Chemical mapping of a 177-nucleotide RNA with 2A3 and DMS.

RNA sequence: GGGAACGACUCGAGUAGAGUCGAAAAUGUGGGGACUUCGGUCCCCACAAUAACGAGGAGGGGUUGGCCUCGUAAAAAGCCGCAAACUACGAAAGUAGAAAACACACGUCGAGUUCGCUCGACGUAACUAUCAGAAAGUAUUCGUACUUUCUGAUAGAAAAGAAACAACAACAACAAC
Reactivity to 2A3 in 0.01 (KOAc 150mM, MgCl2 10mM, bicine 150mM(pH8.5), 24C), signal-to-noise 2, nucleotides 027 to 126: u090g010u010g010g040g000g010a000c010u040u040c190g140g000u020c010c020c000c000a000c000a020a000u020a020a020c020g010a030g040g010a070g010g220g000g000u030u130g030g070c000c000u010c010g000u000a000a090a000a020a000g030c040c000g060c090a030a060a060c010u000a000c000g020a040a050a030g020u030a000g040a060a090a020a000c090a010c010a010c000g000u000c000g000a010g010u070u080c190g080c080u010c000g000a000c000g000u000a000a000
Reactivity to DMS in 0.01 (KOAc 150mM, MgCl2 10mM, bicine 150mM(pH8.5), 24C), signal-to-noise 7, nucleotides 027 to 126: u000g030u000g000g020g010g010a020c010u000u020c200g040g010u000c000c000c010c000a010c000a000a040u000a100a090c020g020a020g000g010a080g010g010g020g030u010u010g010g010c010c010u000c010g010u000a030a050a060a100a050g020c040c030g020c110a110a050a100c010u000a000c010g000a130a070a150g000u000a010g000a060a050a020a060c300a060c240a030c040g000u000c000g010a020g010u000u010c230g000c000u000c000g000a010c000g000u000a010a080
The RNA was probed in 150 mM KOAc, 10 mM MgCl2 and 150 mM bicine (pH 8.5) at 24 C.
The data come from the RNA Mapping Database (RMDB), library M2PK50.
DMS adducts were read by reverse transcription with MarathonRT.
For 2A3, 3,830 sequencing reads were counted.